The data come from the RNA Mapping Database (RMDB), library OK3TST. Chemical mapping of a 207-nucleotide RNA with 2A3. The RNA was probed in 150 mM KOAc, 10 mM MgCl2 and 150 mM bicine (pH 8.5) at 24 C.
RNA sequence: GGGAACGACUCGAGUAGAGUCGAAAACAUGGUAUGGCCUCGCAUCCGGCCUACCUACAGAAUCAACAACUUGGGAUGCGGUGGGCGAGAGCCCUAAGAAGGAGUCUCCGCGCCUGGGGAGCUCCGUAUGACUUAAUGUAUUACCAGGCGAAUACAAGGUCAUAGUGAUGUUCGCAUCACUAUGACCAAAAGAAACAACAACAACAAC
Reactivity to 2A3 in 0.01 (KOAc 150mM, MgCl2 10mM, bicine 150mM(pH8.5), 24C), signal-to-noise 2, nucleotides 027 to 156: c080a040u080g010g030u100a100u300g080g000c030c030u110c000g020c000a000u000c000c000g010g020c000c000u000a000c000c000u050a100c030a060g190a040a080u200c120a110a020c010a060a020c100u100u200g030g000g000a000u000g040c000g030g040u060g000g030g020c010g000a010g000a000g040c000c000c010u000a000a010g070a030a030g000g010a000g040u060c030u000c040c000g000c000g010c100c000u000g000g000g000g000a010g000c000u000c000c000g020u000a030u080g070a040c020u100u160a110a070u170g110u130a150u110u110a100c010c000a000g000g000c000g000a000a000u100a040c080a060a040
For 2A3 the reverse transcriptase was SuperScript II with manganese.